[RMDB]
RNA sequence: GGGAACGACUCGAGUAGAGUCGAAAAGAUUAUGUGGGAGAGGCGCCCUUUCGUUUCAUCGGAUAAUUAAUUGCCAGUCGCUGGCUUUAGCGAUGUUGAUGUCAUCUGUAGCGAUGACUAUGCUACUUUAAGGUAUGAUCCGGAUACCGCCGGUAAAAUCGACCGUAUAUUUCGAUAUACGGUCGAUAAAAGAAACAACAACAACAAC
Reactivity to 2A3 in 0.01 (KOAc 150mM, MgCl2 10mM, bicine 150mM(pH8.5), 24C), signal-to-noise 3, nucleotides 027 to 156: g070a000u110u110a040u200g010u100g030g030g000a090g020a040g010g020c010g010c000c030c050u050u090u050c080g020u030u070u040c030a030u080c030g050g010a020u040a080a040u300u130a060a100u170u200g010c010c030a040g040u090c010g030c070u030g010g000c000u070u070u100a010g000c000g000a000u020g060u020u040g040a040u090g010u000c010a020u000c040u080g190u210a030g020c040g020a020u010g000a000c020u030a010u090g040c000u010a030c030u130u150u140a110a030g080g000u030a030u080g040a020u070c000c000g020g000a010u020a010c000c040g020c010c000g010g000u030a040a030a000
Reactivity to DMS in 0.01 (KOAc 150mM, MgCl2 10mM, bicine 150mM(pH8.5), 24C), signal-to-noise 2, nucleotides 027 to 156: g000a110u010u010a050u010g020u010g010g020g000a150g010a110g020g030c070g010c050c010c030u000u020u000c040g000u000u000u010c030a070u010c040g030g040a170u000a070a090u010u000a060a120u010u010g030c060c020a080g020u000c000g040c020u000g010g020c080u000u000u000a050g010c010g020a050u000g000u020u000g000a230u010g010u000c010a020u000c020u000g010u000a090g010c100g000a100u000g010a070c030u000a080u000g010c020u000a050c040u000u000u000a050a140g000g040u000a010u000g000a150u010c030c010g000g040a180u000a050c060c060g020c060c060g000g020u000a050a070a080